[RMDB]
RNA sequence: GGGAACGACUCGAGUAGAGUCGAAAAUUUUCGGUGAUCAUGCCGACGCUGACCAAUACCGAAAUGGUCGCCGGUGUCGGACAUGCGAAGGGCUUCAAGAAUGCCGAGCCGGAAGACGUCGCGCGGGCAUACCUGACGUCUUCGGACGUCAGGUAUGAAAAGAAACAACAACAACAAC
Reactivity to 2A3 in 0.01 (KOAc 150mM, MgCl2 10mM, bicine 150mM(pH8.5), 24C), signal-to-noise 6, nucleotides 027 to 126: u070u070u020u050c030g000g040u100g120a150u100c070a080u120g010c020c000g000a010c000g000c100u160g000a010c010c010a050a070u100a220c020c040g080a070a030a090u070g000g000u010c010g000c050c040g010g010u060g280u060c010g010g030a060c000a000u010g020c020g070a060a040g120g100g020c010u090u100c100a100a090g080a160a040u060g010c000c000g000a000g000c010c000g020g010a030a040g030a050c020g020u060c010g000c040g000c010g080g020g020
Reactivity to DMS in 0.01 (KOAc 150mM, MgCl2 10mM, bicine 150mM(pH8.5), 24C), signal-to-noise 5, nucleotides 027 to 126: u000u000u020u000c000g010g010u010g000a080u020c070a060u020g010c000c010g000a020c010g000c000u020g000a040c010c000a030a100u030a120c060c060g010a030a060a100u000g000g010u000c030g010c050c060g000g010u020g010u000c010g000g010a120c020a000u000g010c100g010a090a050g010g020g010c080u010u010c120a120a140g010a130a090u020g010c000c010g010a270g000c000c010g000g000a230a050g010a080c010g000u000c010g010c130g040c000g010g000g000
Description
The record gives the reactivity of an RNA of 177 nucleotides to 2A3 and DMS. Reactivities are rounded to 0.1 and cut off at 0 and 3. Reactivities are given for positions 27 through 126. The DMS profile rests on 11,065 reads. The reactions ran in a buffer of 150 mM KOAc, 10 mM MgCl2 and 150 mM bicine (pH 8.5), at 24 C. It was measured as part of the RMDB library OK1LIB. The 2A3 profile rests on 5,222 reads.